RNA sequence: GGGAACGACUCGAGUAGAGUCGAAAACUGGUUCUGGUAUUAAGCUUUCUGUUACCCCAGGAAGAUGAAUGAAUCUUAAUGGACAAAAACAAUACCACACCGGCCGGGACCACAAACGUCCAGAGGUUAAUGGCAACGUCCAUCACGGUGCGGUACGCACAACCAGAGAAUUCGUUCUCUGGUUGUGAAAAGAAACAACAACAACAAC
Reactivity to DMS in 0.01 (KOAc 150mM, MgCl2 10mM, bicine 150mM(pH8.5), 24C), signal-to-noise 2, nucleotides 027 to 156: c050u010g030g020u000u000c010u000g020g010u000a100u020u010a090a160g000c030u010u010u010c000u000g000u000u000a150c100c090c180c000a150g030g020a040a010g010a070u020g000a150a110u000g000a090a080u000c040u000u010a060a140u000g010g030a150c020a070a060a120a100a060c060a120a110u000a030c020c000a010c040a000c010c050g000g000c050c010g020g020g010a070c000c030a060c080a030a080a060c090g000u010c010c060a070g010a140g040g010u010u000a100a050u000g000g010c030a080a090c120g000u000c020c050a060u010c040a070c010g020g020u000g010c030g000g020u000a020c050g020
Reactivity to 2A3 in 0.01 (KOAc 150mM, MgCl2 10mM, bicine 150mM(pH8.5), 24C), signal-to-noise 6, nucleotides 027 to 156: c030u020g000g010u000u030c010u020g050g010u090a100u160u130a190a030g020c010u010u040u000c010u030g100u110u190a140c010c020c000c010a000g020g010a010a010g020a030u090g060a120a100u100g020a030a040u030c030u070u150a130a080u110g040g020a040c060a030a110a030a040a000c050a080a070u030a040c020c000a000c000a000c000c000g000g010c010c000g000g010g000a000c030c000a040c100a140a170a020c090g020u030c010c010a040g070a060g190g020u100u160a070a020u060g000g030c070a200a100c180g050u050c020c000a030u040c040a010c020g000g020u020g000c010g020g010u040a030c050g020